[RMDB]
RNA sequence: GGGAACGACUCGAGUAGAGUCGAAAAGACGGUGGCUGCAAGUCGCAUCGCAAAACCGCGGCAAGUGGAGUUAGCGAGAGGAGGCUGGGUUUUGGCUUCCUUAAGCAAUCCGUCACCGAGAAGGUGUUAAACGGCGCAUGCUUCGGCAUGCGCCGAAGGAUACAUCCCAGUUCGCUGGGAUGUAUCCAAAAGAAACAACAACAACAAC
Reactivity to 2A3 in 0.01 (KOAc 150mM, MgCl2 10mM, bicine 150mM(pH8.5), 24C), signal-to-noise 1, nucleotides 027 to 156: g090a000c020g000g000u050g050g000c090u060g040c050a050a110g050u010c030g080c010a040u090c030g080c280a060a040a070a040c090c110g000c000g020g150c100a100a140g050u070g040g020a140g020u220u300a050g020c010g020a000g000a000g080g000a000g010g000c020u100g060g200g070u130u170u200u220g090g000c030u000u020c000c000u000u000a010a000g020c000a000a050u000c000c000g050u090c020a010c000c040g040a020g050a030a060g040g000u040g050u130u090a080a130a040c020g000g000c010g000c010a000u000g020c000u040u020c050g090g000c050a000u000g000c050g000c000c000g000a000a000
This 207-nucleotide RNA was probed chemically with 2A3. Conditions: 150 mM KOAc, 10 mM MgCl2 and 150 mM bicine (pH 8.5), 24 C.